Conditions: 150 mM KOAc, 10 mM MgCl2 and 150 mM bicine (pH 8.5), 24 C. Chemical mapping of a 177-nucleotide RNA with 2A3.
[RMDB]
RNA sequence: GGGAACGACUCGAGUAGAGUCGAAAACGCGUAGCGGCCACCUCCCCAUUUAUUGCAAUUGCUUCGCAAUUGUAAAAAAGGUUAACUAUCCACAUUUGAUACGACUAGUACUUUUUGCCCAUCCAUUCUUAUGGCUGAGCUUCGGCUCAGCCAUAAGAAAAGAAACAACAACAACAAC
Reactivity to 2A3 in 0.01 (KOAc 150mM, MgCl2 10mM, bicine 150mM(pH8.5), 24C), signal-to-noise 2, nucleotides 027 to 126: c040g080c040g070u040a020g010c030g000g000c050c000a050c030c000u050c000c000c000c000a030u010u120u260a190u100u000g020c000a000a000u000u000g000c000u040u120c090g000c000a000a000u000u010g040u090a010a010a010a010a010a010g020g000u110u070a100a050c010u020a010u090c110c070a080c080a130u050u200u300g080a040u030a050c030g030a030c020u010a030g000u040a030c040u050u010u000u000u180g030c000c000c030a050u050c110c000a030u040u000